An RNA of 207 nucleotides, treated with 2A3 and DMS and read out base by base. DMS adducts were read by reverse transcription with MarathonRT. For 2A3 the reverse transcriptase was SuperScript II with manganese. The reactions ran in a buffer of 150 mM KOAc, 10 mM MgCl2 and 150 mM bicine (pH 8.5), at 24 C. The data come from the RNA Mapping Database (RMDB), library OK3TST.

[RMDB]
RNA sequence: GGGAACGACUCGAGUAGAGUCGAAAACGGCGACUGCAGCUGUAGCCACCGCCUCUACCGAGGUCAGGGGCGAUAAUUUUGCCAGCCCUGCAGCAGUGGCAGCGGCCGAGGCGGCUGAAACCGAAAGUAAGAUAGUCAUUCAGCCGGUGGAGAAGGAAUAACAAGCCUUAUUCGUAAGGCUUGUUAUAAAAGAAACAACAACAACAAC
Reactivity to 2A3 in 0.01 (KOAc 150mM, MgCl2 10mM, bicine 150mM(pH8.5), 24C), signal-to-noise 3, nucleotides 027 to 156: c000g000g030c040g060a200c140u040g000c010a010g010c030u040g030u070a030g000c050c020a060c040c000g000c010c000u000c010u140a230c050c120g020a030g010g000u050c120a110g010g000g000g030c020g000a010u060a020a100u050u190u150u110g030c030c030a010g010c080c040c030u040g020c020a060g010c000a030g040u070g080g000c000a000g010c050g100g000c020c020g020a100g030g040c000g000g020c000u010g010a050a010a030c060c070g050a060a050a000g050u090a140a010g030a120u190a050g050u060c030a010u000u000c000a000g020c030c040g020g040u070g040g000a070g010a130a030g070g080a110
Reactivity to DMS in 0.01 (KOAc 150mM, MgCl2 10mM, bicine 150mM(pH8.5), 24C), signal-to-noise 2, nucleotides 027 to 156: c010g000g000c010g010a000c030u000g020c010a120g040c030u020g020u000a110g020c070c040a020c040c010g010c000c000u010c010u000a120c260c140g010a080g060g020u010c050a030g010g010g000g050c000g030a070u000a060a160u000u000u000u020g030c080c020a250g000c000c000c020u000g020c060a150g020c020a110g020u000g020g010c010a020g000c030g000g060c020c020g020a070g010g020c010g000g020c010u010g010a050a050a300c090c040g000a070a060a130g040u000a150a110g020a150u000a090g000u000c040a220u020u000c000a050g000c000c000g010g000u000g000g000a160g010a120a130g010g000a140